[RMDB]
RNA sequence: GGGAACGACUCGAGUAGAGUCGAAAACGGUAAAAGUACAGGCGGGUACGGCAGAGUGCGGCCGCAUUACUUUUGUAAUGAGCACUCCGGCCGCAGCCUCCGUCGCCGCCUCGACGGAGGGGACCUGAAUCAUUAGGGUAUUCGUACCCUAAUGAUUAAAAGAAACAACAACAACAAC
Reactivity to DMS in 0.01 (KOAc 150mM, MgCl2 10mM, bicine 150mM(pH8.5), 24C), signal-to-noise 9, nucleotides 027 to 126: c070g010g010u010a060a080a110a130g010u000a030c030a010g000g000c010g000g000g020u000a020c000g020g020c190a100g010a070g020u000g020c000g010g010c020c020g010c010a000u000u000a000c000u000u010u010u010g010u000a010a010u000g010a170g020c100a140c050u000c160c020g010g010c000c000g020c010a070g010c010c000u000c000c000g000u000c010g000c010c010g000c010c010u000c010g010a010c010g000g000a020g010g010g010g000a090c130c080u000g000
Reactivity to 2A3 in 0.01 (KOAc 150mM, MgCl2 10mM, bicine 150mM(pH8.5), 24C), signal-to-noise 9, nucleotides 027 to 126: c030g020g060u160a070a110a090a130g010u010a020c000a010g000g010c010g020g010g000u020a020c050g120g080c150a040g060a030g160u070g010c000g000g000c010c010g000c010a000u020u010a010c010u110u300u180u280g000u000a000a010u010g010a030g100c050a020c140u020c030c010g000g000c010c010g000c000a020g060c010c000u000c000c000g000u000c000g000c000c010g000c000c000u000c000g000a000c000g010g020a010g000g000g010g030a050c040c070u070g110
Source: RMDB library OK2TRN, as collected in RNAgym. Chemical mapping of a 177-nucleotide RNA with DMS and 2A3. DMS adducts were read by reverse transcription with MarathonRT. The RNA was probed in 150 mM KOAc, 10 mM MgCl2 and 150 mM bicine (pH 8.5) at 24 C. High 2A3 reactivity points to a flexible backbone, as in loops and unpaired stretches.